[RMDB]
RNA sequence: GGGAACGACUCGAGUAGAGUCGAAAAACGAAGCCGUGCACGUCGUCGACGAGCUGCCCGAGAUGCGCCGGUACUGGAUCGGCAUGGACUACGGCACGGUCAACGCCACGUCCGUGAUCCUGCUCGGCCUCGGCGUCGAUGACCGGCUGUACGCGUGGAUAUAUAGGUGAUUCGUCACCUAUAUAUCAAAAGAAACAACAACAACAAC
Reactivity to DMS in 0.01 (KOAc 150mM, MgCl2 10mM, bicine 150mM(pH8.5), 24C), signal-to-noise 4, nucleotides 027 to 156: a060c040g010a120a060g020c020c000g030u010g050c020a090c020g050u000c030g020u000c000g020a050c010g000a070g020c120u000g020c100c030c020g010a060g010a170u000g010c100g020c010c020g010g010u010a210c120u010g020g010a060u000c020g010g020c020a080u000g020g010a050c020u000a050c040g010g020c050a040c040g030g040u000c030a080a160c220g010c010c010a110c050g000u000c000c010g000u000g000a030u000c010c010u000g000c010u000c000g010g010c020c010u010c020g010g010c030g040u000c000g000a030u010g010a060c000c020g020g010c000u000g010u000a040c040g010c030g010u000g020
Reactivity to 2A3 in 0.01 (KOAc 150mM, MgCl2 10mM, bicine 150mM(pH8.5), 24C), signal-to-noise 9, nucleotides 027 to 156: a010c060g060a030a000g030c030c010g050u100g030c110a030c120g000u000c000g000u000c000g010a010c010g020a030g040c130u130g040c110c030c020g010a010g000a030u280g060c100g000c050c010g020g020u090a160c130u210g060g060a030u030c010g060g020c100a090u130g010g000a010c030u050a060c120g010g000c040a030c120g050g030u070c080a060a050c080g010c010c010a030c090g030u030c010c000g000u030g010a040u010c000c010u020g020c020u030c020g000g000c000c000u010c000g040g000c000g000u000c000g000a010u010g030a050c000c000g030g000c030u010g030u040a060c070g020c040g070u090g070
Source: RMDB library OK3TST, as collected in RNAgym. The record gives the reactivity of an RNA of 207 nucleotides to DMS and 2A3. The RNA was probed in 150 mM KOAc, 10 mM MgCl2 and 150 mM bicine (pH 8.5) at 24 C. For 2A3, 25,504 sequencing reads were counted.